An RNA of 177 nucleotides, treated with DMS and 2A3 and read out base by base.

[RMDB]
RNA sequence: GGGAACGACUCGAGUAGAGUCGAAAAGAUAAGUCAAUGAGAGAGAAGGGAAAACCUUGAUGGUGACAUUCAACUCUUGGAACUUGCAGCAGAGAAAUGGAUGUAAUGUGGUGGAUACCGUAUGAGGCCAUAAUUCAACGUUCGCGUUGAAUUAUGGAAAAGAAACAACAACAACAAC
Reactivity to DMS in 0.01 (KOAc 150mM, MgCl2 10mM, bicine 150mM(pH8.5), 24C), signal-to-noise 4, nucleotides 027 to 126: g000a120u000a070a080g010u010c050a080a060u010g000a080g010a070g010a140g000a070a110g020g000g010a130a070a130a090c030c030u000u020g000a090u000g000g020u010g010a130c050a040u000u010c050a060a160c050u010c030u010u000g020g000a090a060c060u010u010g010c050a080g010c040a070g010a050g000a020a050a100u000g000g010a050u010g000u000a040a040u000g020u000g020g000u010g020g000a070u000a060c060c040g010u000a060u010g000a120g010g010
Reactivity to 2A3 in 0.01 (KOAc 150mM, MgCl2 10mM, bicine 150mM(pH8.5), 24C), signal-to-noise 3, nucleotides 027 to 126: g010a030u110a070a000g030u050c050a060a110u190g000a000g000a010g000a010g000a050a060g050g010g000a010a070a050a080c010c020u030u110g080a080u180g040g010u010g050a020c010a030u030u040c040a100a110c040u020c030u040u030g050g020a060a050c020u000u090g000c040a050g000c000a010g070a000g000a060a080a040u100g010g030a010u020g030u130a120a030u080g020u030g040g040u020g050g000a080u090a060c030c010g040u080a090u180g050a070g050g070
It was measured as part of the RMDB library OK2TRN. The RNA was probed in 150 mM KOAc, 10 mM MgCl2 and 150 mM bicine (pH 8.5) at 24 C. Values cover nucleotides 27 to 126. 2A3 adducts were read by reverse transcription with SuperScript II with manganese. 2A3 is a SHAPE reagent: it acylates the 2'-hydroxyl of flexible nucleotides of all four kinds.